[RMDB]
RNA sequence: GGGAACGACUCGAGUAGAGUCGAAAAAGUUCCAUUGUACACUGGCAAGUCAGUGAAUGUGUAAUUCCAGACACCGUUAUUUUCGGUUACAAGAACAGAGCGUUCAGUGCCAUCAGUACCAAUCAAACAGGAUAUUAUCAUUCGUGAUAAUAUCCUGAAAAGAAACAACAACAACAAC
Reactivity to DMS in 0.01 (KOAc 150mM, MgCl2 10mM, bicine 150mM(pH8.5), 24C), signal-to-noise 8, nucleotides 027 to 126: a120g000u000u000c010c010a130u040u010g000u010a030c040a130c240u000g000g000c060a060a110g030u020c100a120g020u000g000a020a020u000g010u020g010u020a190a120u000u000c010c030a160g000a150c150a020c020c000g020u010u030a090u020u030u020u000c020g010g000u000u030a210c270a120a060g000a050a020c060a080g040a220g010c050g000u000u000c020a060g010u010g000c010c020a030u010c100a050g000u000a030c060c170a070a080u030c120a050a090a190
Reactivity to 2A3 in 0.01 (KOAc 150mM, MgCl2 10mM, bicine 150mM(pH8.5), 24C), signal-to-noise 9, nucleotides 027 to 126: a000g070u040u010c010c000a020u020u100g010u010a000c030a010c030u010g020g000c040a110a070g100u170c080a070g080u050g120a020a020u040g050u010g060u200a030a060u050u000c030c020a020g030a050c030a010c040c010g020u060u100a290u170u190u080u100c010g000g010u020u060a060c060a120a060g010a040a010c040a060g100a020g130c020g010u020u020c020a030g050u010g040c010c000a040u060c030a030g000u020a020c030c050a040a090u130c070a030a030a080